[RMDB]
RNA sequence: GGGAACGACUCGAGUAGAGUCGAAAACAUCUCUCAAACAUACCGGGAGACCAACCAAAUGGGGUUUUUAAUCCCGACGAAUACGAUUACGAUCAGAUUGAGGUCGAUAGCCAAGAUCUGAAGGAGGAAGAACAAGACGACCUCUUCUAUUUGGGGACAUUUGAUGUCCCUUCGGGGACAUCAAAUGAAAAGAAACAACAACAACAAC
Reactivity to DMS in 0.01 (KOAc 150mM, MgCl2 10mM, bicine 150mM(pH8.5), 24C), signal-to-noise 1, nucleotides 027 to 156: c110a140u000c000u000c000u000c070a140a080a210c080a140u000a080c110c040g010g010g010a040g030a080c100c040a030a190c010c010a220a070a040u000g000g010g080g030u000u000u000u000u000a030a140u000c060c000c000g010a170c030g000a060a100u000a080c040g060a180u000u000a070c120g000a290u000c000a000g030a030u000u000g000a300g010g030u000c010g030a100u030a300g010c010c000a000a300g010a010u000c000u000g000a060a100g000g010a070g000g030a080a110g000a220a280c070a070a080g010a030c040g000a180c030c000u000c000u000u000c040u000a110u000u000u000g010g010g000g000a210
Reactivity to 2A3 in 0.01 (KOAc 150mM, MgCl2 10mM, bicine 150mM(pH8.5), 24C), signal-to-noise 2, nucleotides 027 to 156: c030a060u040c020u000c020u010c020a160a250a120c040a160u200a180c070c020g020g000g000a010g010a010c060c000a000a080c000c020a030a070a070u150g000g000g000g000u020u020u000u050u200a040a030u000c040c000c000g030a060c000g060a030a030u140a070c090g060a020u200u060a040c060g070a060u000c000a000g010a020u010u010g000a000g040g060u120c140g160a120u190a050g020c010c000a030a000g010a000u020c010u000g000a010a000g030g020a010g040g010a000a150g010a100a020c130a150a000g090a030c070g030a020c040c030u000c000u050u010c090u070a050u090u050u030g000g000g010g030a000